[RMDB]
RNA sequence: GGGAACGACUCGAGUAGAGUCGAAAAAGUACUCACCUGUCGUCGGUAGAGAGUACUCACCUGUCGUCGGUAAAGAGUACUCCCCUGUCGUCGGAAGAGAGUAUCUGCUGUCGAUGGUCGAUGGUGACGUCUUACAAAUCUUCGGAUUUGUAAGACGAAAAGAAACAACAACAACAAC
Reactivity to DMS in 0.01 (KOAc 150mM, MgCl2 10mM, bicine 150mM(pH8.5), 24C), signal-to-noise 2, nucleotides 027 to 126: a060g010u000a030c010u000c000a130c040c000u010g020u000c010g000u000c030g000g020u010a070g000a110g000a090g020u000a030c010u010c000a090c020c000u000g030u010c190g000u000c170g020g000u000a080a090a110g000a010g000u000a010c000u000c020c020c050c110u000g030u000c010g030u000c010g000g000a090a040g000a130g000a060g000u000a030u000c080u000g000c030u010g000u000c030g000a210u010g020g010u000c030g010a040u000g010g010u010g010a160
Reactivity to 2A3 in 0.01 (KOAc 150mM, MgCl2 10mM, bicine 150mM(pH8.5), 24C), signal-to-noise 2, nucleotides 027 to 126: a000g020u010a020c000u000c000a090c060c020u060g040u080c010g000u000c010g000g000u060a030g040a010g000a010g030u040a030c000u000c010a020c010c020u170g170u300c120g070u060c050g010g020u100a140a140a010g010a010g010u000a000c010u000c030c010c010c000u040g020u010c010g000u020c010g010g020a070a030g060a000g000a000g000u010a030u020c090u130g040c020u030g040u020c010g050a070u170g120g180u100c010g030a040u030g020g020u030g080a030